Source: RMDB library OK2TRN, as collected in RNAgym. Structure probing data (2A3 and DMS) for a 177-nucleotide construct. DMS adducts were read by reverse transcription with MarathonRT.
RNA sequence: GGGAACGACUCGAGUAGAGUCGAAAAGGGCAAAGGGAUGCCAUUUAUGCAUGGGGACCUUGGAGUCCCGCUGCUAAUGAUGGGUUGCUAUUCACAAUUAACACCCCUGACUCUGAUAGUAGCUAUCCACAAGACUAACUUUCGAGUUAGUCUUGUGAAAAGAAACAACAACAACAAC
Reactivity to 2A3 in 0.01 (KOAc 150mM, MgCl2 10mM, bicine 150mM(pH8.5), 24C), signal-to-noise 9, nucleotides 027 to 126: g020g000g020c060a080a030a050g070g010g010a030u050g060c010c000a000u020u050u030a080u060g010c020a020u100g010g000g010g000a010c020c020u120u210g170g030a210g070u000c020c000c030g000c010u010g000c000u030a080a090u170g030a010u020g010g010g040u070u080g030c030u080a100u150u160c080a050c030a130a080u140u070a120a020c020a060c030c010c000c010u020g030a070c020u010c020u060g050a050u030a080g080u080a030g030c030u030a050u020c020
Reactivity to DMS in 0.01 (KOAc 150mM, MgCl2 10mM, bicine 150mM(pH8.5), 24C), signal-to-noise 9, nucleotides 027 to 126: g010g010g020c080a070a120a060g010g010g010a070u000g010c020c020a020u000u000u000a100u010g010c010a020u000g010g000g000g000a020c000c010u020u010g020g010a190g010u000c000c000c000g000c060u000g010c000u000a110a080u010g000a020u000g000g000g020u000u000g000c050u000a100u000u000c160a100c100a040a050u010u010a090a140c080a070c040c000c000c010u000g000a120c050u000c020u000g000a090u000a050g010u010a070g010c060u000a070u000c050
Overview:
The reactions ran in a buffer of 150 mM KOAc, 10 mM MgCl2 and 150 mM bicine (pH 8.5), at 24 C.